[RMDB]
RNA sequence: GGGAACGACUCGAGUAGAGUCGAAAAUAAGCACCUCGUUAGGUGAGGCGGCUACACGAACAUAGGCCACUGACCCCGAACGUCGAGAGACGCUCCGGGUCAGGACAGCUCUUCCCGGCUUAAGGGUAAAAUCACAACGUCUUCGGACGUUGUGAAAUCGCAAAAGACGAUUCGUCGUCUUUUGCGAAAAAGAAACAACAACAACAAC
Reactivity to 2A3 in 0.01 (KOAc 150mM, MgCl2 10mM, bicine 150mM(pH8.5), 24C), signal-to-noise 1, nucleotides 027 to 156: u190a050a000g000c000a010c000c000u000c010g160u060u220a060g000g180u210g050a000g010g000c110g030g000c040u050a050c070a000c170g060a190a040c120a090u200a080g080g000c010c020a050c000u000g000a000c000c000c000c000g000a010a000c000g010u000c000g000a030g000a000g010a130c000g000c020u000c000c040g000g010g000u000c000a020g000g000a000c020a000g050c030u060c020u080u030c010c000c000g060g000c010u170u180a070a110g010g020g020u110a060a060a030a160u060c010a020c000a000a000c000g020u010c000u070u080c110g060g000a000c000g020u010u000g000u000g010a000a000a000